[RMDB]
RNA sequence: GGGAACGACUCGAGUAGAGUCGAAAAGAUAUGGAUUGUACCUGCGAUAAGCUGGACUCGGAAACGAGUCCCAGCUUUUGACGCAGUGUACAAUCCUAAGUCAAAGUGCUGAGUUCGCUCAGCACAACUACUUCAGAGACUUCGGUCUCUGAAGUAGAAAAGAAACAACAACAACAAC
Reactivity to DMS in 0.01 (KOAc 150mM, MgCl2 10mM, bicine 150mM(pH8.5), 24C), signal-to-noise 2, nucleotides 027 to 126: g020a020u010a300u030g010g000a010u000u000g000u000a000c010c010u000g000c000g040a180u010a030a010g000c000u000g000g000a020c000u010c000g020g000a120a070a220c020g010a010g000u000c150c060c030a000g010c010u000u000u000u010g040a230c100g000c010a010g000u010g020u010a000c010a000a000u010c000c000u000a010a060g000u010c040a120a110a150g000u000g030c000u000g000a040g010u010u020c250g030c000u000c000a030g000c000a000c010a040a140
Reactivity to 2A3 in 0.01 (KOAc 150mM, MgCl2 10mM, bicine 150mM(pH8.5), 24C), signal-to-noise 2, nucleotides 027 to 126: g030a010u100a030u160g000g000a000u000u020g000u020a000c000c000u010g050c030g050a070u030a190a010g020c010u000g030g000a010c000u010c010g030g060a070a070a060c000g000a000g010u010c010c010c000a010g000c000u040u010u010u020g120a090c070g000c020a010g020u070g010u080a000c010a000a000u010c000c000u000a010a010g030u000c040a120a070a110g000u000g000c010u020g010a020g000u150u180c300g140c120u010c010a000g000c000a010c000a000a010
Conditions: 150 mM KOAc, 10 mM MgCl2 and 150 mM bicine (pH 8.5), 24 C. An RNA of 177 nucleotides, treated with DMS and 2A3 and read out base by base. 2A3 is a SHAPE reagent: it acylates the 2'-hydroxyl of flexible nucleotides of all four kinds. DMS adducts were read by reverse transcription with MarathonRT. In probing experiments dimethyl sulfate is read out at A N1 and C N3, which are open when not base-paired. 2A3 adducts were read by reverse transcription with SuperScript II with manganese. Reactivities are given for positions 27 through 126. Source: RMDB library TTRDES, as collected in RNAgym.